[RMDB]
RNA sequence: GGGAACGACUCGAGUAGAGUCGAAAAGAUAUGGACCGCAUUGUGGCAACAGCUCGGAAACGAGACAUGCCAUAAUGACGGUCCUAAGUCAAAGCCUCAAGGAUAUGUUCGCAUAUCCUUGAGGCAACCUACACUAACUCUUCGGAGUUAGUGUAGGAAAAGAAACAACAACAACAAC
Reactivity to 2A3 in 0.01 (KOAc 150mM, MgCl2 10mM, bicine 150mM(pH8.5), 24C), signal-to-noise 4, nucleotides 027 to 126: g060a010u070a030u160g010g000a000c000c000g000c000a000u000u000g000u020g010g010c000a050a050c070a300g030c010u000c010g050g010a090a080a050c010g010a000g030a060c040a050u090g000c000c010a010u010a010a000u010g040a030c000g000g000u000c000c000u000a050a000g010u000c030a020a080a040g000c000c000u000c000a000a010g000g000a000u000a000u020g060u070u170c300g000c180a000u000a000u000c000c000u000u000g000a000g000g010c000a000a000
Reactivity to DMS in 0.01 (KOAc 150mM, MgCl2 10mM, bicine 150mM(pH8.5), 24C), signal-to-noise 5, nucleotides 027 to 126: g010a040u000a300u010g000g000a010c000c000g020c000a010u000u010g030u000g000g020c000a030a070c290a180g000c000u010c000g000g000a120a070a240c010g000a010g010a030c090a190u000g010c010c000a000u000a000a000u000g000a130c000g010g000u000c000c010u000a000a080g000u000c050a080a120a130g000c000c000u000c000a010a020g000g000a010u000a000u000g000u000u000c230g000c010a000u000a000u000c010c010u000u000g000a000g010g010c010a000a010
Overview: Structure probing data (2A3 and DMS) for a 177-nucleotide construct. DMS adducts were read by reverse transcription with MarathonRT. It was measured as part of the RMDB library TTRDEL. The DMS profile rests on 7,495 reads.